[RMDB]
RNA sequence: GGGAACGACUCGAGUAGAGUCGAAAAGAUAUGGAGAGCGCCGAGCUAUCUUUGGAGCUAAGACAGUCGGAAACGAUCGAGCUCGAUAGUAUCGCUCUCCUAAGUCAAAGCAUCGUUCGCGAUGCAAGGAUUCAAUCUUGUUCGCAAGAUUGAAUCCAAAAGAAACAACAACAACAAC
Reactivity to 2A3 in 0.01 (KOAc 150mM, MgCl2 10mM, bicine 150mM(pH8.5), 24C), signal-to-noise 2, nucleotides 027 to 126: g020a020u080a040u120g010g000a000g000a020g000c030g040c120c240g100a080g010c060u010a020u040c050u200u190u300g170g000a000g000c010u030a100a080g130a110c050a090g070u040c020g090g000a130a060a080c020g010a030u170c080g020a000g000c000u010c010g000a020u010a000g020u010a050u100c030g000c010u010c000u000c000c030u000a030a000g020u010c040a120a000a060g020c010a020u000c000g080u110u150c300g000c030g090a000u000g000c000a000a040
Reactivity to DMS in 0.01 (KOAc 150mM, MgCl2 10mM, bicine 150mM(pH8.5), 24C), signal-to-noise 2, nucleotides 027 to 126: g050a070u010a300u020g000g010a040g000a000g000c020g010c300c150g050a180g000c000u000a010u000c000u000u010u030g040g010a010g010c020u030a200a180g020a080c300a040g000u010c000g010g020a110a030a100c010g000a000u000c060g010a040g010c000u000c000g000a000u010a000g000u000a040u000c020g000c020u000c000u000c000c000u000a020a070g000u000c070a050a150a190g000c000a010u000c000g000u000u000c220g050c020g000a000u000g000c010a030a050

This 177-nucleotide RNA was probed chemically with 2A3 and DMS.
2A3 adducts were read by reverse transcription with SuperScript II with manganese.
The RNA was probed in 150 mM KOAc, 10 mM MgCl2 and 150 mM bicine (pH 8.5) at 24 C.
Reactivities are given for positions 27 through 126.